RNA sequence: GGGAACGACUCGAGUAGAGUCGAAAAGGCAAUCAGGGAACUAUUGUCAACAACUUUUAUGCUAACUCAUAUUAUGCUUCUAUUGAUGCUUCUGCCUCCUCAGUCGGGGGCGAUACUCCUGCUGAAAGUAAGUCCGUCAAUUCGUUGACGGACUUACAAAAGAAACAACAACAACAAC
Reactivity to DMS in 0.01 (KOAc 150mM, MgCl2 10mM, bicine 150mM(pH8.5), 24C), signal-to-noise 1, nucleotides 027 to 126: g000g020c010a020a040u000c090a040g000g020g020a030a080c060u010a090u010u000g000u040c030a070a060c090a090a070c100u000u000u040u000a040u000g000c090u000a180a160c120u000c030a020u000a040u020u000a150u000g000c020u000u000c040u000a150u000u020g000a130u000g020c070u000u000c090u000g000c000c010u000c020c010u000c000a050g000u030c230g020g000g000g010g010c000g000a060u010a110c070u000c070c020u000g030c080u000g000a100a030a170
Reactivity to 2A3 in 0.01 (KOAc 150mM, MgCl2 10mM, bicine 150mM(pH8.5), 24C), signal-to-noise 1, nucleotides 027 to 126: g000g020c030a000a030u040c020a110g000g040g060a030a020c050u050a040u110u070g030u070c040a070a020c000a000a050c060u090u030u070u090a080u120g080c050u080a050a080c000u020c050a020u030a050u180u090a090u120g010c010u020u030c030u080a140u100u070g050a000u040g000c000u020u040c020u080g000c000c000u010c000c010u040c030a020g110u080c030g020g000g030g000g000c000g010a000u000a030c000u000c000c000u000g040c000u030g060a010a020a010
An RNA of 177 nucleotides, treated with DMS and 2A3 and read out base by base. Values cover nucleotides 27 to 126. The 2A3 profile rests on 1,165 reads.